[RMDB]
RNA sequence: GGGAACGACUCGAGUAGAGUCGAAAACUGCAUCUGUGGAGGACGAAGCAUAUUUCUGUUUCUGGAGGAUCAUUUAUAAUCUGCCGGAAAGUCUUGCAGGUGGCUGGGAUAUGUUCAGUCUGGUAGAAAAAUCAGGAGUCCUUCGGGACUCCUGAAACAAUAAGGUCAACUUCGGUUGACCUUAUUGAAAAGAAACAACAACAACAAC
Reactivity to DMS in 0.01 (KOAc 150mM, MgCl2 10mM, bicine 150mM(pH8.5), 24C), signal-to-noise 1, nucleotides 027 to 156: c040u000g000c040a070u000c000u000g040u000g030g020a190g000g020a040c020g000a110a160g000c050a070u000a020u000u000u010c040u020g000u000u010u000c030u000g020g000a040g020g000a040u010c000a090u000u010u000a110u000a060a040u020c000u010g000c010c000g010g000a090a070a090g010u010c050u010u000g050c010a090g000g010u000g010g010c020u000g000g020g010a050u000a000u000g000u000u000c020a300g010u010c010u040g020g020u000a170g020a060a060a060a120a240u000c000a040g020g020a050g010u000c010c010u000u000c300g070g020g050a020c010u000c000c000u000g000a010a010a050
Reactivity to 2A3 in 0.01 (KOAc 150mM, MgCl2 10mM, bicine 150mM(pH8.5), 24C), signal-to-noise 1, nucleotides 027 to 156: c000u000g000c040a030u010c000u020g000u050g050g140a270g110g000a030c030g000a010a020g000c000a010u000a030u020u080u050c070u110g170u110u110u000c020u010g000g010a030g030g020a030u030c020a020u090u300u040a060u030a100a120u010c030u080g110c010c010g000g010a000a040a030g000u020c010u060u030g000c000a000g000g000u010g020g000c030u090g000g000g010a020u030a000u070g000u020u010c020a000g050u000c000u070g000g100u150a170g150a090a070a020a000a020u040c000a000g010g030a000g000u000c000c000u030u140c150g070g000g000a030c010u010c000c000u000g000a000a000a000